[RMDB]
Annotation: The record gives the reactivity of an RNA of 177 nucleotides to DMS and 2A3. Reactivities are given for positions 27 through 126. The reactions ran in a buffer of 150 mM KOAc, 10 mM MgCl2 and 150 mM bicine (pH 8.5), at 24 C. For DMS, 2,226 sequencing reads were counted. As a SHAPE reagent, 2A3 marks flexible, mostly unpaired nucleotides at the ribose 2'-OH. Source: RMDB library VIROID, as collected in RNAgym. The 2A3 profile rests on 2,368 reads. 2A3 adducts were read by reverse transcription with SuperScript II with manganese.

RNA sequence: GGGAACGACUCGAGUAGAGUCGAAAAGAUGAACCCAUGGCAGGGCGAAACCAGUGUGGUACGGUAUGGCGAGGCUUGCCUCGGAGCCAAGCGGGAGGGCUCCCGGGGCGCCGCACGGGCGCAGUGCGACUUUCUAAUUCUUCGGAAUUAGAAAGUCAAAAGAAACAACAACAACAAC
Reactivity to DMS in 0.01 (KOAc 150mM, MgCl2 10mM, bicine 150mM(pH8.5), 24C), signal-to-noise 2, nucleotides 027 to 126: g020a130u010g010a110a140c030c010c010a110u020g010g000c060a060g020g000g020c030g010a070a130a060c080c040a060g000u010g000u000g010g000u010a050c080g000g010u000a050u000g000g020c040g000a110g010g010c100u010u000g040c010c010u000c010g010g000a040g000c010c010a090a100g010c050g000g020g010a070g000g000g010c010u000c070c010c040g010g000g010g010c000g000c040c020g030c030a050c050g010g000g040c030g010c040a080g020u010g010c130
Reactivity to 2A3 in 0.01 (KOAc 150mM, MgCl2 10mM, bicine 150mM(pH8.5), 24C), signal-to-noise 2, nucleotides 027 to 126: g040a040u120g030a060a070c000c010c010a070u060g050g000c050a030g040g020g010c020g050a080a030a030c030c030a080g040u020g020u060g130g030u050a040c050g000g040u070a070u080g050g000c050g010a050g040g030c030u030u110g010c000c000u010c000g000g000a000g020c010c010a040a040g040c060g020g010g040a020g000g010g040c000u020c070c010c020g000g010g010g000c000g020c000c030g000c010a020c000g060g030g010c060g020c010a000g030u020g060c060